[RMDB]
RNA sequence: GGGAACGACUCGAGUAGAGUCGAAAAGUCGCCGCGUCUACAUCAACGCCCAGCGCGGGCGAGGGAGGCGUCCUACGGGGGUGACCCAUUCGCCGGCAUGGUAGAGGACAGCAAGAUUGCCACGACGGAUCGGUAUCCAUUUCGAUGGAUACCGAUCAAAAGAAACAACAACAACAAC
Reactivity to 2A3 in 0.01 (KOAc 150mM, MgCl2 10mM, bicine 150mM(pH8.5), 24C), signal-to-noise 1, nucleotides 027 to 126: g050u020c000g000c030c040g010c020g030u000c050u070a110c020a120u080c060a120a030c040g020c000c000c000a100g070c260g030c110g180g030g000c010g010a030g060g000g010a190g000g070c000g040u040c000c000u010a130c130g140g000g000g000g040u070g120a170c010c040c000a030u050u000c020g000c010c000g060g000c030a060u090g040g020u050a050g000a040g040g070a020c020a000g040c030a070a000g020a090u090u170g010c000c020a010c050g040a010c050g010
Reactivity to DMS in 0.01 (KOAc 150mM, MgCl2 10mM, bicine 150mM(pH8.5), 24C), signal-to-noise 2, nucleotides 027 to 126: g000u000c020g000c020c140g020c050g000u020c030u000a060c080a070u010c090a170a120c120g000c050c010c020a080g000c170g020c070g030g010g000c020g020a060g000g000g000a140g020g020c020g000u010c020c020u000a060c160g030g030g030g000g030u000g010a150c060c000c010a110u020u000c070g050c030c010g000g000c000a020u020g010g010u000a090g000a090g030g000a050c080a090g000c060a040a060g000a140u000u010g030c000c030a080c020g010a060c140g000